Background: An RNA of 177 nucleotides, treated with 2A3 and DMS and read out base by base. The 2A3 profile rests on 1,504 reads. For 2A3 the reverse transcriptase was SuperScript II with manganese. The DMS profile rests on 1,117 reads. Source: RMDB library OK2TRN, as collected in RNAgym.
[RMDB]
RNA sequence: GGGAACGACUCGAGUAGAGUCGAAAAGAGGAUUCAACGAGCUUCGUAGCAACGAUAGCAACGUAGCUUUUGCUACGACCCGAGCUAUCGAGGGGAGCUACGUCCCAUGCUCGAGGGGAGAAUCCGACAGCGAUACCCAGUUCGCUGGGUAUCGCUGAAAAGAAACAACAACAACAAC
Reactivity to 2A3 in 0.01 (KOAc 150mM, MgCl2 10mM, bicine 150mM(pH8.5), 24C), signal-to-noise 1, nucleotides 027 to 126: g090a030g000g000a000u020u030c030a170a060c040g000a010g050c000u060u040c010g040u050a010g000c050a060a070c040g000a000u020a000g020c010a020a100c020g010u020a010g000c020u090u150u180u300g010c000u000a010c010g060a050c000c030c020g050a040g020c000u030a000u030c010g000a120g000g040g060g020a070g000c040u020a020c020g100u050c010c010c000a020u130g000c010u000c040g040a090g020g090g000g000a120g020a030a010u010c000c020g020a010
Reactivity to DMS in 0.01 (KOAc 150mM, MgCl2 10mM, bicine 150mM(pH8.5), 24C), signal-to-noise 2, nucleotides 027 to 126: g010a270g020g010a060u010u000c000a190a150c070g020a150g000c010u000u010c030g020u020a020g010c020a140a180c030g000a000u000a020g000c000a100a120c000g030u000a000g010c000u000u000u000u000g010c000u000a000c030g000a050c120c120c020g000a110g020c000u000a020u000c010g000a150g000g000g020g020a160g040c020u000a010c090g000u000c090c060c060a200u000g000c000u000c000g010a080g020g030g020g000a140g000a040a010u000c010c010g000a110